An RNA of 177 nucleotides, treated with 2A3 and DMS and read out base by base. For DMS, 11,347 sequencing reads were counted. The RNA was probed in 150 mM KOAc, 10 mM MgCl2 and 150 mM bicine (pH 8.5) at 24 C. For DMS the reverse transcriptase was MarathonRT. It was measured as part of the RMDB library OK2TST.
RNA sequence: GGGAACGACUCGAGUAGAGUCGAAAAGAUGACCUCCUCCGAGAACUCCAGGAUGUGCGUCUCUAUGGGACGGCGUUCCCUGGGCGGUGUCUCGAGGAGCGAGAUGUCCCGGAUCUUGAGGAGCGACUACGCUCCUAGAGUUCGCUCUAGGAGCGUAAAAAGAAACAACAACAACAAC
Reactivity to 2A3 in 0.01 (KOAc 150mM, MgCl2 10mM, bicine 150mM(pH8.5), 24C), signal-to-noise 4, nucleotides 027 to 126: g080a050u120g050a050c000c000u000c000c000u090c100c060g010a000g010a020a010c020u030c040c010a000g040g010a020u060g070u160g210c010g020u000c000u000c020u100a280u300g060g000g000a000c010g030g080c000g040u040u040c030c010c010u010g000g000g030c140g040g070u110g140u030c010u000c000g010a040g000g020a000g000c010g010a110g000a020u090g030u040c000c000c000g030g060a050u020c020u040u100g060a090g050g040a040g060c030g030a030c060
Reactivity to DMS in 0.01 (KOAc 150mM, MgCl2 10mM, bicine 150mM(pH8.5), 24C), signal-to-noise 7, nucleotides 027 to 126: g000a070u010g010a300c300c000u000c000c000u000c040c060g020a020g010a100a050c030u000c000c000a020g000g000a080u010g000u010g010c010g010u000c010u000c030u020a180u010g010g000g010a020c010g010g000c010g010u010u010c120c020c010u000g010g000g010c200g010g010u000g010u000c000u000c010g000a050g010g000a010g000c030g000a090g000a070u000g000u000c000c000c000g010g000a070u010c030u000u010g010a100g010g000a090g010c050g020a130c150